The data come from the RNA Mapping Database (RMDB), library OK1LIB. Chemical mapping of a 177-nucleotide RNA with DMS and 2A3. For DMS, 810 sequencing reads were counted. The RNA was probed in 150 mM KOAc, 10 mM MgCl2 and 150 mM bicine (pH 8.5) at 24 C. Values cover nucleotides 27 to 126. 2A3 adducts were read by reverse transcription with SuperScript II with manganese. The 2A3 profile rests on 723 reads. For DMS the reverse transcriptase was MarathonRT.
[RMDB]
RNA sequence: GGGAACGACUCGAGUAGAGUCGAAAAUAUCUAUCAGUCCUUGUCCCCAAAGGACUGGAUCAAUGCUCAGAUGUAAAGGGACCAUAUCCUCCUUAUUUGGGAUCAAAAACAUCAGAAACAACAUCACUGAUACAGGCUCGUUCGCGAGCCUGUAUCAAAAAGAAACAACAACAACAAC
Reactivity to DMS in 0.01 (KOAc 150mM, MgCl2 10mM, bicine 150mM(pH8.5), 24C), signal-to-noise 1, nucleotides 027 to 126: u000a050u030c000u000a140u000c010a000g000u000c000c000u010u000g000u050c000c000c000c100a300a070a060g000g060a000c000u030g000g000a010u000c210a060a060u000g000c250u000c000a230g020a000u000g000u000a070a070a140g010g000g000a070c000c130a030u000a300u020c100c090u000c010c030u000u000a060u000u000u000g080g000g000a000u070c110a060a040a060a210a040c150a000u000c000a000g020a100a030a070c150a090a070c140a110u000c130a150c300
Reactivity to 2A3 in 0.01 (KOAc 150mM, MgCl2 10mM, bicine 150mM(pH8.5), 24C), signal-to-noise 2, nucleotides 027 to 126: u140a000u110c110u050a060u140c000a000g010u000c050c000u080u020g060u140c080c000c000c070a000a000a000g000g000a000c000u000g000g000a030u030c160a010a180u060g000c010u020c080a010g040a030u020g040u130a060a000a130g020g010g000a020c010c010a000u020a080u170c040c000u010c000c060u130u060a100u010u080u040g000g000g050a010u010c000a000a050a070a000a030c020a030u170c000a000g040a000a070a010c040a070a010c000a300u040c110a090c050